[RMDB]
RNA sequence: GGGAACGACUCGAGUAGAGUCGAAAAUAAAAUAAUGCACAUAAUCCAGUCGCAGACGCUAAAAAUGACGCUGCCUCGCGACGGAUGUGGCAACGCGCACUCACGCCGAAGUGAAAUCGGUAAAAAAGUAUAUUCUCGUGUUCGCACGAGAAUAUACAAAAGAAACAACAACAACAAC
Reactivity to DMS in 0.01 (KOAc 150mM, MgCl2 10mM, bicine 150mM(pH8.5), 24C), signal-to-noise 1, nucleotides 027 to 126: u010a110a110a050a150u000a050a100u000g020c000a100c020a000u000a230a030u000c010c000a140g030u000c000g010c010a020g020a020c070g000c010u000a020a050a040a080a070u020g000a110c120g000c010u040g130c020c010u000c160g020c030g010a010c000g020g000a010u000g000u010g000g010c000a050a080c110g000c160g000c100a060c030u020c050a060c110g000c020c000g000a020a020g010u010g010a020a100a070u000c030g030g000u020a000a050a030a050a070a130
Reactivity to 2A3 in 0.01 (KOAc 150mM, MgCl2 10mM, bicine 150mM(pH8.5), 24C), signal-to-noise 2, nucleotides 027 to 126: u140a010a130a010a030u240a060a070u140g040c080a090c000a230u130a110a070u130c030c040a060g000u010c000g000c010a010g000a020c020g000c030u040a120a110a130a040a180u130g000a040c060g000c030u080g040c000c010u010c090g000c000g020a000c000g010g000a000u010g000u000g000g060c010a000a060c070g000c010g000c030a050c040u060c000a040c100g000c000c020g020a000a000g010u040g130a050a070a040u020c000g030g040u060a080a050a000a000a020a030